[RMDB]
RNA sequence: GGGAACGACUCGAGUAGAGUCGAAAAGCUUCCUCUUGGCGCGGAGGUUUAACUGCGCUCGCUCCCCAUAUCGGUGUGGGCGCACCGGAUUUACGAAUUAAAGUCCUUUAGGGAGCGGAAAGGGACAAAAACUUGCACGUGUUCGCACGUGCAAGAACUAACAGAAAUCCUUCGGGAUUUCUGUUAGAAAAGAAACAACAACAACAAC
Reactivity to DMS in 0.01 (KOAc 150mM, MgCl2 10mM, bicine 150mM(pH8.5), 24C), signal-to-noise 1, nucleotides 027 to 156: g030c050u010u000c000c000u010c020u000u040g000g020c000g080c000g020g030a090g030g000u020u010u000a120a120c030u020g030c000g000c010u000c000g010c000u030c000c000c010c060a140u010a060u000c020g010g080u000g080u000g040g040g030c220g030c000a010c030c000g000g030a120u000u010u000a250c110g000a120a100u010u020a030a090a130g010u000c010c030u030u000u000a020g010g010g010a020g040c050g000g000a010a110a050g000g010g030a080c090a130a080a050a150a110c030u000u010g000c000a010c000g050u010g000u000u000c300g050c010a000c000g000u020g010c000a010a010g000a030a160
Reactivity to 2A3 in 0.01 (KOAc 150mM, MgCl2 10mM, bicine 150mM(pH8.5), 24C), signal-to-noise 1, nucleotides 027 to 156: g020c040u160u040c000c000u000c000u000u010g010g010c010g010c010g010g010a010g010g000u050u060u180a010a010c020u050g020c000g010c000u010c000g000c000u000c000c000c000c020a070u110a080u150c020g010g000u000g010u010g060g190g040c050g010c000a000c000c000g060g020a070u100u100u170a090c050g060a030a020u140u090a140a070a000g010u010c000c010u030u030u060a030g000g020g000a010g000c020g000g000a050a040a000g040g010g010a030c080a040a150a010a010a100c010u000u000g000c000a000c000g000u000g030u050u070c160g000c100a000c000g000u000g000c000a000a000g000a000a000